The record gives the reactivity of an RNA of 207 nucleotides to 2A3 and DMS.
For 2A3, 1,467 sequencing reads were counted.
DMS adducts were read by reverse transcription with MarathonRT.
For 2A3 the reverse transcriptase was SuperScript II with manganese.
For DMS, 3,161 sequencing reads were counted.
[RMDB]
RNA sequence: GGGAACGACUCGAGUAGAGUCGAAAAUACCGUACGUGUAUGGUCAACUGUUGCGCGGCCACACUUUCGACGACAUCGUUCGAGAGGAUCGCGUCAGGUAUGCAAUGGAAAAAAUCUCCAACCGUCUCGUCAAAGUCGGCAACAAAGGCAUACGUUACUUGAAACUCCUUUUCGAAGGAGUUUCAAGAAAAGAAACAACAACAACAAC
Reactivity to 2A3 in 0.01 (KOAc 150mM, MgCl2 10mM, bicine 150mM(pH8.5), 24C), signal-to-noise 3, nucleotides 027 to 156: u100a010c020c010g050u120a040c070g040u070g000u010a000u040g040g080u090c100a120a050c120u060g070u100u060g040c230g000c000g000g000c040c010a090c010a010c000u000u040u010c000g010a010c010g030a030c050a180u190c080g140u220u050c000g040a000g000a000g010g030a080u150c010g000c040g040u040c060a050g020g000u050a030u060g060c050a090a120u070g030g090a050a040a060a020a030a070u070c050u000c020c030a050a110c000c020g050u000c010u030c010g120u030c040a020a130a000g020u020c000g030g000c010a020a020c020a070a040a070g070g020c010a030u040a020c010g060u080u050a040
Reactivity to DMS in 0.01 (KOAc 150mM, MgCl2 10mM, bicine 150mM(pH8.5), 24C), signal-to-noise 2, nucleotides 027 to 156: u000a110c000c020g010u000a010c090g010u000g010u000a040u010g010g000u000c020a080a170c030u000g000u000u000g060c030g010c060g040g060c010c040a090c090a210c030u010u010u000c020g000a050c000g000a290c140a180u000c080g000u000u000c020g020a040g000a040g000g010a080u000c060g050c000g050u000c040a120g030g000u000a020u000g010c030a040a150u000g030g000a000a030a100a140a090a120u000c030u000c000c020a090a080c010c000g000u000c010u010c010g000u010c230a060a030a070g000u000c010g040g000c000a080a070c040a040a130a130g000g030c020a040u000a020c060g000u010u000a070